[RMDB]
RNA sequence: GGGAACGACUCGAGUAGAGUCGAAAAAUUAAGUAGCCUGCCUGCGUUACCUUCGCUGGAAGGGCUGACGGUACGCAAGCUGCAACUCUCUAUGGACCCGAUGCUCGAUAUGAUGGGGAUGCAGAUGCUCAAUCUGAACCUUCGGGUUCAGAUUGAGAAAAGAAACAACAACAACAAC
Reactivity to 2A3 in 0.01 (KOAc 150mM, MgCl2 10mM, bicine 150mM(pH8.5), 24C), signal-to-noise 2, nucleotides 027 to 126: a000u240u210a210a020g090u050a030g040c040c080u050g010c020c010u000g000c020g060u050u070a080c010c030u120u050c030g050c080u110g190g190a220a090g140g000g050c030u070g020a030c050g020g000u030a010c000g010c100a120a030g010c000u030g000c020a000a000c010u010c020u040c020u040a040u110g070g050a080c030c000c000g060a100u220g000c070u030c030g080a040u040a110u300g080a060u140g010g000g040g000a020u020g000c000a020g040a160u100g060
Reactivity to DMS in 0.01 (KOAc 150mM, MgCl2 10mM, bicine 150mM(pH8.5), 24C), signal-to-noise 1, nucleotides 027 to 126: a090u000u010a080a150g020u010a070g020c050c110u000g010c030c040u000g000c000g010u010u000a040c030c030u000u020c050g030c020u010g010g020a160a100g000g020g020c040u020g040a050c070g000g040u020a020c040g000c020a040a100g010c030u000g000c040a050a130c050u000c020u000c060u000a090u010g000g010a170c050c060c070g040a070u020g000c120u010c020g010a090u000a060u020g010a100u010g000g010g000g000a080u000g000c050a080g030a120u000g020
The record gives the reactivity of an RNA of 177 nucleotides to 2A3 and DMS. For DMS, 928 sequencing reads were counted. For 2A3 the reverse transcriptase was SuperScript II with manganese. The 2A3 profile rests on 1,010 reads. The reactions ran in a buffer of 150 mM KOAc, 10 mM MgCl2 and 150 mM bicine (pH 8.5), at 24 C.